Chemical mapping of a 177-nucleotide RNA with 2A3. The data come from the RNA Mapping Database (RMDB), library OK1LIB. The 2A3 profile rests on 618 reads. The RNA was probed in 150 mM KOAc, 10 mM MgCl2 and 150 mM bicine (pH 8.5) at 24 C. Reactivities are given for positions 27 through 126. For 2A3 the reverse transcriptase was SuperScript II with manganese.

[RMDB]
RNA sequence: GGGAACGACUCGAGUAGAGUCGAAAAGGGUGGCUGAUCGCAGGCCAGCGAGGCAGCGCACGGAACAAUAGCGGCAGCCACCAUUCCGCUAUCGCUAUAAUGGCCGUGUAACGCAACUAACGGAAUGGCCGAUGACCUAGUUCGCUAGGUCAUCGGCAAAAGAAACAACAACAACAAC
Reactivity to 2A3 in 0.01 (KOAc 150mM, MgCl2 10mM, bicine 150mM(pH8.5), 24C), signal-to-noise 1, nucleotides 027 to 126: g100g000g000u010g010g000c010u000g000a190u020c000g000c030a030g000g180c010c000a000g000c000g020a120g060g020c070a000g000c030g000c000a040c040g080g040a230a140c230a050a200u060a000g000c000g000g020c010a000g020c000c000a000c000c000a000u000u000c000c000g000c000u090a100u180c050g000c000u030a030u070a130a110u200g090g030c000c000g000u000g030u110a040a050c050g000c220a190a050c080u050a030a030c030g160g000a070a060u030g140